[RMDB]
RNA sequence: GGGAACGACUCGAGUAGAGUCGAAAACUGAUGAUCAAUACAGUAUUUUUGUCGCAUUCUUAUUACGGUACGUGCAAACAUUAGUUUCCAAGCGGAAGAAACUGUGUGUUCAUUUUAUGGAUUUUCGACAUGAACAUCCCUUCGGGGAUGUUCAUGUAAAAGAAACAACAACAACAAC
Reactivity to 2A3 in 0.01 (KOAc 150mM, MgCl2 10mM, bicine 150mM(pH8.5), 24C), signal-to-noise 2, nucleotides 027 to 126: c020u000g020a000u010g000a010u060c040a110a040u040a030c000a020g030u030a300u000u000u000u050u040g300u180c020g030c030a120u300u070c090u150u230a250u140u250a030c010g010g010u050a000c020g060u110g040c040a010a060a090c010a130u050u150a050g040u030u110u000c040c010a070a070g060c040g090g000a030a000g020a030a010a000c040u000g000u000g020u000g000u010u000c040a060u050u010u020u150a030u040g150g000a050u000u000u000u080c030g010
Reactivity to DMS in 0.01 (KOAc 150mM, MgCl2 10mM, bicine 150mM(pH8.5), 24C), signal-to-noise 1, nucleotides 027 to 126: c060u000g000a000u020g000a000u000c050a120a100u010a010c000a000g010u000a040u010u000u000u000u000g010u060c000g020c030a110u020u000c140u010u040a190u010u020a120c180g000g000u030a010c090g070u020g000c100a070a060a070c040a110u000u020a060g030u000u000u000c050c040a100a080g030c100g000g000a020a040g000a000a020a000c000u000g000u000g020u000g000u000u040c080a010u020u000u000u000a030u020g010g000a190u010u000u000u010c120g020

Structure probing data (2A3 and DMS) for a 177-nucleotide construct. The data come from the RNA Mapping Database (RMDB), libraries RFM100 and RFMREP. 2A3 adducts were read by reverse transcription with SuperScript II with manganese. DMS adducts were read by reverse transcription with MarathonRT.